[RMDB]
RNA sequence: GGGAACGACUCGAGUAGAGUCGAAAACUGCUCCCCUGCACUCGGUUUUGCAGGGUAGCCUGGCAGGACACACAGCAUCCCCCUCUCAGUUUAGGAGAGCCGUCCUAAGAAUGGGGCUGGCUCUUAAUGAUGAAGGGUAAUUCGUUACCCUUCAUCAAAAAGAAACAACAACAACAAC
Reactivity to 2A3 in 0.01 (KOAc 150mM, MgCl2 10mM, bicine 150mM(pH8.5), 24C), signal-to-noise 6, nucleotides 027 to 126: c030u020g030c010u020c010c000c000c000u010g000c000a030c040u120c170g190g020u120u100u130u050g000c010a000g000g010g000u010a000g020c010c040u040g040g000c030a040g050g050a010c010a000c010a000c010a070g030c010a120u040c000c000c000c000c000u020c000u000c040a110g040u080u090u130a130g040g030a010g010a000g000c000c000g000u000c000c000u070a160a140g200a190a180u300g030g000g000g010c060u140g020g000c000u000c000u000u020a020a030
Reactivity to DMS in 0.01 (KOAc 150mM, MgCl2 10mM, bicine 150mM(pH8.5), 24C), signal-to-noise 6, nucleotides 027 to 126: c060u000g020c020u010c080c010c000c000u010g000c000a030c120u020c190g000g000u010u020u010u000g000c000a030g000g000g010u010a010g000c030c100u010g000g010c040a050g010g010a090c080a060c060a070c070a070g000c060a100u010c010c010c010c010c010u000c020u010c050a140g010u010u010u000a110g010g000a020g000a010g010c000c000g010u000c000c000u010a080a120g020a140a130u020g010g010g000g000c000u010g030g010c010u010c000u000u000a020a120